[RMDB]
RNA sequence: GGGAACGACUCGAGUAGAGUCGAAAAUUCACACCACUAACAUGUGGUAUGAGGGAGCUGGUGGAAAUUUUAACGCUGCUCACGGAAGCUUUACUGGUAACACUAUGAAUCACUGUGACUAUGGGGGAAAUCUUUGGCCGACGGCUUUCCAGUUACCGUACUACAUGCGAUUCGUCGCAUGUAGUACAAAAGAAACAACAACAACAAC
Reactivity to DMS in 0.01 (KOAc 150mM, MgCl2 10mM, bicine 150mM(pH8.5), 24C), signal-to-noise 1, nucleotides 027 to 156: u010u030c030a030c010a110c020c000a010c040u000a150a220c230a160u000g040u000g010g050u020a000u030g010a080g010g010g000a140g040c030u010g070g050u000g030g020a120a050a120u010u000u000u000a060a170c050g010c010u000g000c010u000c040a100c050g000g010a130a100g010c070u000u000u010a060c050u010g030g020u010a050a110c040a120c030u000a040u000g000a110a100u000c050a140c010u000g010u030g020a040c070u000a000u000g030g020g000g010g000a080a030a100u000c050u000u030u000g050g010c020c000g000a090c010g010g000c080u000u000u010c010c030a110g020u000u000a070c080c040
Reactivity to 2A3 in 0.01 (KOAc 150mM, MgCl2 10mM, bicine 150mM(pH8.5), 24C), signal-to-noise 3, nucleotides 027 to 156: u090u030c040a030c000a000c000c000a010c040u150a200a060c080a150u200g010u000g020g030u040a040u090g020a060g010g020g000a010g050c100u070g030g040u020g020g130a100a140a110u190u160u060u100a170a050c080g010c080u070g030c010u000c010a060c030g040g000a040a060g000c020u190u150u090a080c060u090g020g000u060a050a020c020a010c090u060a060u220g090a030a030u090c020a020c120u080g050u040g110a030c030u060a210u170g000g010g000g000g090a030a060a000u050c040u060u050u080g040g000c030c040g050a050c040g030g020c000u020u060u010c020c000a000g000u030u060a060c020c100